[RMDB]
RNA sequence: GGGAACGACUCGAGUAGAGUCGAAAAUGCUUCGGUCUUGCCUGCGGCUUUUGCUUCCAGAGACUUCAAGCGCUCCUUUAGAGCUUUACGAAUCUCCACCAGGCCGGCAUCGGUUUUCUUCGGCCAGGACGUACUACUAUUUCGAUAGUAGUACGUCAAAAGAAACAACAACAACAAC
Reactivity to 2A3 in 0.01 (KOAc 150mM, MgCl2 10mM, bicine 150mM(pH8.5), 24C), signal-to-noise 4, nucleotides 027 to 126: u080g000c010u060u060c030g030g020u010c020u030u070g040c010c010u040g040c030g020g020c000u110u090u130u160g010c000u110u000c020c020a020g030a020g000a100c030u040u020c100a060a060g050c030g000c060u020c020c000u070u100u180a090g000a010g020c000u090u100u100a060c060g030a060a030u020c010u010c050c010a060c040c020a040g020g000c010c010g020g000c020a040u120c070g060g000u010u090u110u000c010u060u060c000g020g030c020c000a030g080
Reactivity to DMS in 0.01 (KOAc 150mM, MgCl2 10mM, bicine 150mM(pH8.5), 24C), signal-to-noise 7, nucleotides 027 to 126: u000g010c030u000u000c060g010g010u000c040u010u000g010c050c030u000g020c100g000g000c030u000u000u010u010g000c050u000u010c060c080a130g010a090g010a070c140u000u000c050a070a170g020c200g010c020u000c030c160u010u010u010a110g010a060g010c020u000u000u000a110c130g000a060a100u000c010u000c010c080a120c080c070a090g000g010c010c010g020g030c160a060u000c100g020g010u010u000u000u000c070u000u000c050g010g010c020c040a130g010

The record gives the reactivity of an RNA of 177 nucleotides to 2A3 and DMS.
Reactivities are given for positions 27 through 126.
The RNA was probed in 150 mM KOAc, 10 mM MgCl2 and 150 mM bicine (pH 8.5) at 24 C.
For 2A3 the reverse transcriptase was SuperScript II with manganese.
Source: RMDB library OK2TST, as collected in RNAgym.
The 2A3 profile rests on 6,841 reads.